The data come from the RNA Mapping Database (RMDB), library OK2TST. Chemical mapping of a 177-nucleotide RNA with DMS and 2A3. DMS adducts were read by reverse transcription with MarathonRT. For 2A3, 1,283 sequencing reads were counted. The reactions ran in a buffer of 150 mM KOAc, 10 mM MgCl2 and 150 mM bicine (pH 8.5), at 24 C.
RNA sequence: GGGAACGACUCGAGUAGAGUCGAAAAUGAUUCAAAUCCCUUGCUUUGUUCUGCGGGGUCAAUUGUAAUUGUUGGGGUGGUUGUUCUCCAACUUGCUUGAAGGCGCCAACUACUUUAUUUGCAUAAAUAUCCUAUGGAUAUUCGUAUCCAUAGGAUAAAAAGAAACAACAACAACAAC
Reactivity to DMS in 0.01 (KOAc 150mM, MgCl2 10mM, bicine 150mM(pH8.5), 24C), signal-to-noise 4, nucleotides 027 to 126: u010g010a110u000u000c110a030a090a130u010c020c010c010u000u010g030c040u000u010u000g010u010u000c140u000g010c060g010g000g000g000u000c100a040a070u000u000g010u010a040a050u010u000g020u000u000g000g000g000g000u000g010g010u000u000g000u000u000c010u010c010c010a020a040c050u000u000g010c070u000u000g000a090a060g000g010c080g010c080c040a040a080c060u000a070c060u000u010u000a060u020u000u010g000c060a080u010a030a070a160
Reactivity to 2A3 in 0.01 (KOAc 150mM, MgCl2 10mM, bicine 150mM(pH8.5), 24C), signal-to-noise 2, nucleotides 027 to 126: u040g000a010u130u050c030a030a020a120u030c010c010c000u020u120g010c010u150u050u130g050u090u140c080u100g010c000g030g010g000g000u020c010a000a050u080u080g070u100a010a130u050u080g020u030u030g000g000g030g060u100g030g010u010u030g030u050u050c010u000c000c010a000a000c000u010u030g030c010u050u030g010a030a000g060g000c050g020c030c000a020a030c060u040a010c000u090u140u150a220u110u080u080g040c010a080u040a080a090a040